An RNA of 177 nucleotides, treated with 2A3 and DMS and read out base by base.
[RMDB]
RNA sequence: GGGAACGACUCGAGUAGAGUCGAAAACGGUGGGGUCGGUUACUUCAUCUGGAAGGAUUCCCAUAGCCGCAAAGGCUGAUCCUCCCGGAUACACAGAGCACGCAAGGCACUUAGGGCGACUUCGGUCGCCUUUUCAAUCAUUCGUGAUUGAAAAGGCAAAAGAAACAACAACAACAAC
Reactivity to 2A3 in 0.01 (KOAc 150mM, MgCl2 10mM, bicine 150mM(pH8.5), 24C), signal-to-noise 9, nucleotides 027 to 126: c030g020g030u060g010g020g000g020u040c020g020g040u070u070a080c020u060u090c030a040u010c010u020g020g010a020a010g020g010a020u070u090c040c030c030a060u120a010g000c010c010g010c080a210a140a030g010g000c000u010g010a060u010c000c000u000c010c000c000g020g000a030u050a040c080a010c010a050g070a010g040c030a010c070g030c040a050a070g050g000c030a010c060u060u130a040g030g010g030c020g020a030c000u040u030c070g050g010u040c020
Reactivity to DMS in 0.01 (KOAc 150mM, MgCl2 10mM, bicine 150mM(pH8.5), 24C), signal-to-noise 9, nucleotides 027 to 126: c100g010g020u010g010g000g010g020u000c060g010g010u010u010a070c080u010u010c110a040u000c020u010g000g010a060a020g000g000a080u000u010c070c080c070a190u030a030g010c000c000g010c250a090a110a150g000g010c010u000g000a060u010c010c010u000c030c010c010g010g000a030u010a090c170a090c150a070g010a080g010c050a050c060g010c070a070a090g000g000c050a050c080u010u010a070g010g000g010c010g000a020c020u000u010c070g010g010u000c050
Overview: The reactions ran in a buffer of 150 mM KOAc, 10 mM MgCl2 and 150 mM bicine (pH 8.5), at 24 C.